[RMDB]
RNA sequence: GGGAACGACUCGAGUAGAGUCGAAAAGUAAAGAUUGCUCUUUUACUCGGCAUGAUACCACCGUUAUCGGGUCAACAGAGUAGUUGCAAAUGACAACAAUGCUCAGGGUUAUGCUCUCGCUGCCUAAAAAAUCGUUUAACGUUCGCGUUAAACGAAAUCACUAUGCUUCGUUCGCGAAGCAUAGUGAAAAAGAAACAACAACAACAAC
Reactivity to DMS in 0.01 (KOAc 150mM, MgCl2 10mM, bicine 150mM(pH8.5), 24C), signal-to-noise 2, nucleotides 027 to 156: g010u000a030a030a100g040a150u000u010g000c050u000c060u000u000u010u010a030c000u010c010g000g090c010a050u000g020a070u000a080c020c010a150c010c010g010u000u010a040u000c130g000g010g040u000c030a060a170c120a190g000a060g030u000a050g040u000u000g000c030a070a120a150u000g010a110c050a060a050c020a030a110u000g010c010u000c030a120g040g020g020u000u000a060u010g030c000u000c010u010c050g070c020u000g040c040c010u020a000a000a060a050a060a070u000c010g020u000u000u010a000a000c010g020u000u000c300g010c000g000u010u000a000a010a000c000g000a010a060a080
Reactivity to 2A3 in 0.01 (KOAc 150mM, MgCl2 10mM, bicine 150mM(pH8.5), 24C), signal-to-noise 7, nucleotides 027 to 156: g020u030a010a030a030g040a120u140u170g030c050u040c000u060u060u020u030a030c010u020c010g000g000c020a010u070g010a010u040a060c000c000a010c000c030g080u080u060a030u060c030g000g000g000u010c000a000a030c040a010g030a010g040u100a020g010u030u030g010c030a070a200a300u200g060a130c000a030a000c020a050a140u090g010c010u020c040a020g050g010g000u090u120a070u210g000c010u030c020u030c110g010c040u050g010c010c010u130a090a070a010a010a010a030u020c010g000u000u000u000a000a010c010g010u020u030c280g010c010g070u000u000a000a000a000c000g000a020a000a000
Structure probing data (DMS and 2A3) for a 207-nucleotide construct. For DMS, 3,754 sequencing reads were counted. The 2A3 profile rests on 7,029 reads. The data come from the RNA Mapping Database (RMDB), library M2RFPK.